[RMDB]
RNA sequence: GGGAACGACUCGAGUAGAGUCGAAAAGAGGAGUGCACGGAAGACACCGACCAGGCGGAGGGCACUGAGAGCGAGCCCAAGGGCGAAAGCUUCGACUCGGGCGUCAGUUCCUCCAUAGGCACCGAGCCUGACUCGGUGGAGCAGCAGUUCGGGCCCGCUAAGCUGAGUAGUUCGCUACUCAGCUUAGAAAAGAAACAACAACAACAAC
Reactivity to 2A3 in 0.01 (KOAc 150mM, MgCl2 10mM, bicine 150mM(pH8.5), 24C), signal-to-noise 1, nucleotides 027 to 156: g080a000g010g010a000g030u090g020c020a010c190g100g030a030a030g050a020c000a000c000c020g010a020c000c040a000g040g000c030g040g200a040g030g020g010c100a000c070u010g010a020g030a020g100c050g040a040g000c000c020c030a070a100g080g020g000c020g030a120a120a100g040c070u080u030c020g070a100c000u020c040g000g020g000c030g120u050c040a030g010u050u000c010c010u000c030c010a040u140a040g030g010c090a100c150c010g030a030g000c000c010u020g010a030c000u000c010g010g000u020g000g000a030g000c040a000g000c000a000g010u020u090c050g030g020g030c020c000c010g000